[RMDB]
RNA sequence: GGGAACGACUCGAGUAGAGUCGAAAAAGUAUAAAUCAUACAAUUCUUGUAGUACAUCAUAUAUAGCACUGAAUUACCAAAUUCCUGAUAAAUAAGGAAAGGGUGGAAUAAAAGUAUCUCAUCAGGUCAUAAUUGUGCAUUUCGAUGCACAAUUAUGAAAAGAAACAACAACAACAAC
Reactivity to 2A3 in 0.01 (KOAc 150mM, MgCl2 10mM, bicine 150mM(pH8.5), 24C), signal-to-noise 6, nucleotides 027 to 126: a000g080u070a060u060a090a150a070u150c020a020u030a050c010a030a050u060u050c040u070u090g070u050a050g020u030a020c000a040u080c050a010u120a040u060a020u060a190g070c050a020c070u030g030a060a060u090u050a050c020c010a000a060a220u040u020c000c000u010g010a030u070a200a170a010u140a080a000g040g000a070a000a000g080g000g020u040g010g090a040a010u120a090a130a030a000g080u050a090u050c030u000c030a110u030c030a040g000g110u040
Reactivity to DMS in 0.01 (KOAc 150mM, MgCl2 10mM, bicine 150mM(pH8.5), 24C), signal-to-noise 3, nucleotides 027 to 126: a070g020u010a010u030a050a110a110u050c100a080u010a010c040a100a100u020u010c040u010u000g010u030a100g030u010a030c120a070u010c120a080u020a110u020a090u030a160g010c060a040c070u020g000a110a060u000u020a070c060c040a010a040a130u020u000c010c000u000g010a110u000a050a100a050u020a080a030g000g000a030a030a060g000g020g030u010g010g020a060a030u020a060a070a060a030g000u000a020u000c000u000c040a080u000c060a060g030g010u010
An RNA of 177 nucleotides, treated with 2A3 and DMS and read out base by base. It was measured as part of the RMDB libraries RFM100 and RFMREP. Conditions: 150 mM KOAc, 10 mM MgCl2 and 150 mM bicine (pH 8.5), 24 C.